An RNA of 177 nucleotides, treated with DMS and 2A3 and read out base by base. DMS adducts were read by reverse transcription with MarathonRT. Source: RMDB library OK1LIB, as collected in RNAgym. Conditions: 150 mM KOAc, 10 mM MgCl2 and 150 mM bicine (pH 8.5), 24 C. For 2A3, 12,652 sequencing reads were counted.
RNA sequence: GGGAACGACUCGAGUAGAGUCGAAAAUCGGGGAGUACGUCAAACACAACGUGACCCCCCGGGAGACCGUCCUGGAUGGCGAUACGGCCAAGGCCUACCUGCGCGCUCGCACGUACGCGCCCGGGGCUGGGAAUAGGUUAUUCGUAACCUAUUCCCAAAAAGAAACAACAACAACAAC
Reactivity to DMS in 0.01 (KOAc 150mM, MgCl2 10mM, bicine 150mM(pH8.5), 24C), signal-to-noise 6, nucleotides 027 to 126: u040c000g010g000g000g010a060g010u000a000c010g000u000c120a130a130a110c290a170c300a080a010c000g000u010g020a050c010c000c000c010c000c000g000g000g000a090g010a130c020c010g010u000c000c000u000g010g000a090u010g010g010c020g000a110u010a020c060g010g020c030c110a080a090g000g000c020c030u010a100c110c100u010g000c090g020c100g000c030u010c290g000c050a070c020g020u000a030c030g010c020g000c030c000c020g000g010g000g000c040
Reactivity to 2A3 in 0.01 (KOAc 150mM, MgCl2 10mM, bicine 150mM(pH8.5), 24C), signal-to-noise 4, nucleotides 027 to 126: u080c000g000g000g000g000a030g030u040a010c000g010u020c070a060a300a060c100a040c030a130a010c030g030u060g240a110c000c000c000c000c000c000g010g020g000a060g050a030c010c010g010u010c000c000u030g040g040a090u080g180g040c010g030a060u010a050c010g010g020c020c030a080a070g040g010c000c020u140a230c080c080u160g050c080g000c010g020c090u030c020g010c010a160c060g010u040a000c030g000c000g030c000c000c000g000g000g010g000c020